RNA sequence: GGGAACGACUCGAGUAGAGUCGAAAAUACCCUCAUAUGUUAAACCUGAUAGUGUGUCUACCAGCGAUUUAGGUAGUCUCAUUGAUUGUAAUGCGGCUUCAGUUAACCAAAUUGUCUUGCGUAAUUCACCUGUUUGUAAGUUCGCUUACAAACAGGUAAAAGAAACAACAACAACAAC
Reactivity to 2A3 in 0.01 (KOAc 150mM, MgCl2 10mM, bicine 150mM(pH8.5), 24C), signal-to-noise 2, nucleotides 027 to 126: u030a020c000c050c000u020c020a150u190a030u100g060u110u130a060a050a070c020c020u050g030a060u030a100g030u040g000u000g000u020c040u030a000c010c000a020g030c050g050a030u040u000u130a050g000g000u010a000g030u030c000u010c000a020u020u030g110a120u040u220g050u100a060a030u050g000c050g000g060c050u130u050c030a060g010u080u080a060a040c000c020a020a070a020u040u050g040u040c010u030u090g050c050g020u030a060a070u030u060c060
Reactivity to DMS in 0.01 (KOAc 150mM, MgCl2 10mM, bicine 150mM(pH8.5), 24C), signal-to-noise 4, nucleotides 027 to 126: u010a150c020c010c020u020c190a080u010a060u010g000u000u010a080a090a100c070c030u000g010a090u000a050g020u000g010u000g000u010c020u000a040c040c010a090g000c150g000a100u000u010u000a070g020g010u010a020g000u000c020u000c020a020u000u010g000a140u010u010g020u000a040a020u000g020c070g010g010c020u000u010c100a080g020u000u010a050a090c060c090a030a050a080u010u010g000u000c120u000u010g020c060g020u000a060a110u010u000c110